[RMDB]
RNA sequence: GGGAACGACUCGAGUAGAGUCGAAAAGAACUUUGGCCGGCUCGGAAUAGAAUCAGGGGGUGCAAACUGCCCACUGACAGAAAGGAUUAUAGCAAAUGCGUACCCUAUUGCAAUACAGCCCGGCCAACAUAGACUACUCUAUUCGUAGAGUAGUCAAAGCUAGUUAUUGCUUCGGCAAUAACUAGCUAAAAGAAACAACAACAACAAC
Reactivity to DMS in 0.01 (KOAc 150mM, MgCl2 10mM, bicine 150mM(pH8.5), 24C), signal-to-noise 1, nucleotides 027 to 156: g030a060a100c100u000u040u010g010g050c000c000g070g070c020u030c080g000g010a120a100u000a100g020a200a180u000c040a050g040g050g030g000g030u000g010c070a010a090a220c280u000g000c000c020c010a020c050u000g010a040c050a090g000a110a100a100g020g010a170u000u000a100u000a100g000c030a040a060a170u010g000c050g040u000a060c060c010c010u000a140u020u000g000c100a030a170u000a130c060a050g040c050c010c050g000g010c020c000a000a040c090a010u000a130g020a000c000u000a000c000u000c000u030a080u010u000c150g060u000a000g000a020g020u000a000g020u020c000a050a020
Reactivity to 2A3 in 0.01 (KOAc 150mM, MgCl2 10mM, bicine 150mM(pH8.5), 24C), signal-to-noise 2, nucleotides 027 to 156: g020a050a020c000u080u010u010g000g000c000c000g000g000c060u060c100g050g080a060a050u090a070g050a040a110u080c020a030g000g000g000g030g000u050g020c050a070a120a120c070u110g030c010c040c030a060c030u040g040a000c010a040g290a070a080a040g070g000a070u220u110a070u280a200g000c010a080a130a180u250g000c020g020u070a060c000c000c020u050a090u020u100g060c050a060a040u050a110c010a030g030c020c020c030g000g010c010c000a000a000c000a020u080a030g000a000c000u000a000c000u000c000u000a030u070u030c070g030u080a000g000a000g000u000a000g000u000c000a000a000
Chemical mapping of a 207-nucleotide RNA with DMS and 2A3. The DMS profile rests on 1,578 reads. For 2A3 the reverse transcriptase was SuperScript II with manganese. For DMS the reverse transcriptase was MarathonRT. The reactions ran in a buffer of 150 mM KOAc, 10 mM MgCl2 and 150 mM bicine (pH 8.5), at 24 C. The 2A3 profile rests on 1,158 reads. It was measured as part of the RMDB library M2RFPK.